[RMDB]
RNA sequence: GGGAACGACUCGAGUAGAGUCGAAAACACGCCUGUAAUCCCAGCUACUUGGGAGGCUAAGGCACAAGAAUCACUUGAACCCGGGAGGUGGAGGUUGCAGUGAGCUGAGAUUGUGCCACUGCAAUGUAGCCUGGGCAACAGAGUGAGACUCUGUCUACAUUUACCGUGAGUUCGCUCACGGUAAAUGAAAAGAAACAACAACAACAAC
Reactivity to 2A3 in 0.01 (KOAc 150mM, MgCl2 10mM, bicine 150mM(pH8.5), 24C), signal-to-noise 3, nucleotides 027 to 156: c020a010c040g030c000c000u030g110u170a040a080u020c010c000c000a000g060c070u250a180c090u110u040g010g030g030a040g060g000c090u110a060a070g000g000c030a010c010a060a020g020a040a020u040c010a000c010u010u040g040a060a050c000c000c000g060g030g000a070g080g110u200g040g130a130g020g090u030u010g000c000a000g000u020g100a120g050c010u060g060a090g050a300u210u200g110u210g100c000c000a000c000u000g000c000a000a000u070g030u090a020g010c000c000u020g000g000g000c030a090a020c020a060g100a000g010u030g030a010g040a010c010u020c020u050g040u050c010u040a060
Reactivity to DMS in 0.01 (KOAc 150mM, MgCl2 10mM, bicine 150mM(pH8.5), 24C), signal-to-noise 1, nucleotides 027 to 156: c020a030c130g020c020c020u000g010u000a150a110u000c000c010c010a100g030c150u010a090c150u000u010g060g010g000a010g030g000c060u010a080a080g040g160c000a080c050a060a070g010a050a200u000c010a040c000u010u010g000a080a020c010c050c010g000g080g000a140g000g030u030g010g010a100g020g040u000u000g020c020a070g040u000g010a250g020c030u030g000a140g000a290u010u010g010u000g020c020c000a000c050u000g010c000a060a000u000g010u000a110g020c000c000u000g030g000g030c000a060a070c050a160g000a020g030u030g010a080g010a220c050u000c010u000g000u000c010u000a230
Chemical mapping of a 207-nucleotide RNA with 2A3 and DMS.
The 2A3 profile rests on 1,649 reads.
Values cover nucleotides 27 to 156.